An RNA of 207 nucleotides, treated with DMS and 2A3 and read out base by base. The RNA was probed in 150 mM KOAc, 10 mM MgCl2 and 150 mM bicine (pH 8.5) at 24 C. 2A3 adducts were read by reverse transcription with SuperScript II with manganese. It was measured as part of the RMDB library RNAMAK.
RNA sequence: GGGAACGACUCGAGUAGAGUCGAAAAAUGCCAUUCGUGGCAUCACUCGCGUACUACGUUUGCUUUUGACGGUGAGAUGUGCCAGUGCUCCCAAAUAGGAGCACGGUAAUUCAUCCCCGAUAAGCAAACGUAUCGCCGUCACGCCCUUCGGGGCGAAUACUGGGAAGUGUUUCGACACUUCCCAGUAAAAAGAAACAACAACAACAAC
Reactivity to DMS in 0.01 (KOAc 150mM, MgCl2 10mM, bicine 150mM(pH8.5), 24C), signal-to-noise 1, nucleotides 027 to 156: a050u010g000c000c010a130u000u030c300g060u020g030g000c000a020u000c040a090c090u010c090g000c090g060u000a050c090u000a010c000g010u020u020u010g000c000u000u000u000u020g000a240c080g000g060u000g000a170g000a030u010g000u010g010c000c010a150g050u000g000c000u000c010c000c070a050a110a230u000a070g040g000a030g050c010a000c000g010g020u010a060a030u010u000c050a090u000c020c000c010c000g010a170u000a010a030g010c000a010a010a000c000g000u000a000u000c010g010c030c090g030u000c040a040c000g010c010c000c000u000u020c300g110g020g010g010c000g000a050a040
Reactivity to 2A3 in 0.01 (KOAc 150mM, MgCl2 10mM, bicine 150mM(pH8.5), 24C), signal-to-noise 3, nucleotides 027 to 156: a010u060g000c030c030a040u070u070c200g130u050g010g000c030a030u080c040a010c010u100c080g000c020g100u110a090c070u000a010c020g010u000u000u030g000c030u130u030u130u280g220a210c030g030g000u130g070a270g000a010u050g010u030g050c010c050a060g000u000g000c030u010c010c030c050a210a300a070u280a070g000g000a010g000c000a010c000g010g030u040a030a020u120u110c000a020u010c020c020c010c000g010a060u000a070a000g000c000a000a000a000c000g000u000a000u000c000g000c020c020g190u120c030a050c070g010c000c000c000u020u020c190g010g020g020g030c000g040a020a030